[RMDB]
RNA sequence: GGGAACGACUCGAGUAGAGUCGAAAAACGAUCAUUACGAUGAUCGACCGCGAUGAUUACCGAAUCACAGCGAUACACGAUGAAGCACUCAUAGUUACUCUGAGCGGAGCCUAGCUACGGCUAGGCAUAGCUCCUUGCUUUUCGAAGCAAGGAGCUAAAAAGAAACAACAACAACAAC
Reactivity to DMS in 0.01 (KOAc 150mM, MgCl2 10mM, bicine 150mM(pH8.5), 24C), signal-to-noise 9, nucleotides 027 to 126: a180c030g000a000u000c000a020u010u020a130c160g010a060u000g010a000u000c010g010a170c030c020g010c060g000a100u000g000a040u010u010a120c100c090g000a090a060u010c020a120c110a100g010c050g000a110u000a070c100a060c060g010a070u010g010a080a110g010c110a140c080u000c030a030u010a040g000u010u010a060c060u000c030u000g010a070g010c050g000g010a190g000c000c000u000a000g010c000u000a110c190g030g010c000u000a010g000g000c000a030
Reactivity to 2A3 in 0.01 (KOAc 150mM, MgCl2 10mM, bicine 150mM(pH8.5), 24C), signal-to-noise 9, nucleotides 027 to 126: a000c010g000a000u000c000a000u020u090a060c220g110a030u010g000a000u010c010g030a030c000c010g010c020g050a110u090g000a020u030u120a130c040c040g090a040a020u050c030a020c020a080g030c020g050a030u050a100c080a010c050g050a040u080g070a100a030g060c050a040c110u030c020a040u050a080g040u040u060a080c020u010c030u060g040a030g030c030g030g030a010g000c000c000u000a000g000c000u020a030c240g060g000c000u000a000g000g000c000a000